The record gives the reactivity of an RNA of 177 nucleotides to 2A3 and DMS.
RNA sequence: GGGAACGACUCGAGUAGAGUCGAAAACAAGAAAGGACACUCACUUAUCCAGAUGCCAGUGUCACAUUUCAAAGGCUGUUCUUCCUAGCAAUCAGGAACUCAGCUGGGGCUGGCAGCAGCAGGGCCACAUAGGACCACGGUUCGCCGUGGUCCUAUGAAAAGAAACAACAACAACAAC
Reactivity to 2A3 in 0.01 (KOAc 150mM, MgCl2 10mM, bicine 150mM(pH8.5), 24C), signal-to-noise 1, nucleotides 027 to 126: c050a000a110g140a130a090a000g080g000a000c000a010c040u080c000a040c040u100u140a110u230c060c040a010g020a130u060g020c010c000a000g010u030g130u190c010a060c010a200u190u230u110c060a080a050a000g060g030c010u010g040u080u050c100u100u000c000c020u000a010g000c060a070a160u230c060a090g010g060a000a040c040u030c020a000g000c010u060g020g040g000g000c010u020g000g030c020a030g030c000a000g020c010a020g000g020g040c020c000a020
Reactivity to DMS in 0.01 (KOAc 150mM, MgCl2 10mM, bicine 150mM(pH8.5), 24C), signal-to-noise 2, nucleotides 027 to 126: c120a120a180g000a090a060a080g030g010a000c030a040c030u000c080a060c050u000u000a120u020c020c080a110g000a080u000g020c040c080a010g000u000g010u010c040a100c190a040u020u030u000c080a110a190a140g000g000c000u000g000u010u000c100u010u000c020c000u000a070g000c200a070a060u020c150a020g000g010a000a020c090u000c040a000g000c020u000g010g010g010g010c030u000g000g000c050a080g000c090a040g000c030a070g000g000g010c070c090a120
The RNA was probed in 150 mM KOAc, 10 mM MgCl2 and 150 mM bicine (pH 8.5) at 24 C. The data come from the RNA Mapping Database (RMDB), library OK2TRN. The DMS profile rests on 1,238 reads.